[RMDB]
Chemical mapping of a 207-nucleotide RNA with DMS and 2A3.
The data come from the RNA Mapping Database (RMDB), library OK3TST.
The reactions ran in a buffer of 150 mM KOAc, 10 mM MgCl2 and 150 mM bicine (pH 8.5), at 24 C.

RNA sequence: GGGAACGACUCGAGUAGAGUCGAAAAGGAACCUGUCGGUGCAAAUUACACAUUCAACUGGGAUGAUUAACUGCAAACAACACCUCUUGUUGACGAAGCCGGGUUGCUGUUGUGGGUUGGCAGGGCAAACAUUCGUAUAUUACGGAUAUGGGGGAACUAUAUUGUGCAUGUUCGCAUGCACAAUAUAAAAAGAAACAACAACAACAAC
Reactivity to DMS in 0.01 (KOAc 150mM, MgCl2 10mM, bicine 150mM(pH8.5), 24C), signal-to-noise 2, nucleotides 027 to 156: g040g020a080a100c040c020u020g000u000c020g040g000u010g000c020a080a050a080u000u000a110c120a110c020a140u010u000c030a040a050c060u020g000g010g020a110u000g010a200u000u000a120a170c100u000g000c130a140a050a110c040a090a100c020a030c030c000u000c020u000u020g010u000u000g010a080c070g020a100a110g030c000c000g030g000g050u010u000g040c010u000g010u010u000g030u000g010g010g000u000u010g010g020c030a070g010g010g040c070a040a040a080c070a050u010u000c020g040u000a080u000a140u000u000a030c030g030g000a020u000a110u010g000g000g010g020g030a070a080c130
Reactivity to 2A3 in 0.01 (KOAc 150mM, MgCl2 10mM, bicine 150mM(pH8.5), 24C), signal-to-noise 2, nucleotides 027 to 156: g030g010a050a050c030c000u060g100u120c050g000g040u040g040c020a010a060a140u140u180a100c040a010c030a110u060u050c080a140a070c120u120g000g040g040a040u070g000a080u050u110a080a100c100u120g070c060a010a140a100c020a030a040c020a050c040c060u030c040u060u160g040u010u050g010a050c030g020a020a000g050c070c000g000g000g000u000u040g000c050u010g010u070u060g010u080g030g000g050u080u120g010g070c010a010g070g030g000c060a030a080a000c030a020u000u000c010g020u000a130u010a050u260u220a070c010g020g000a020u010a090u170g030g000g000g010g010a000a020c020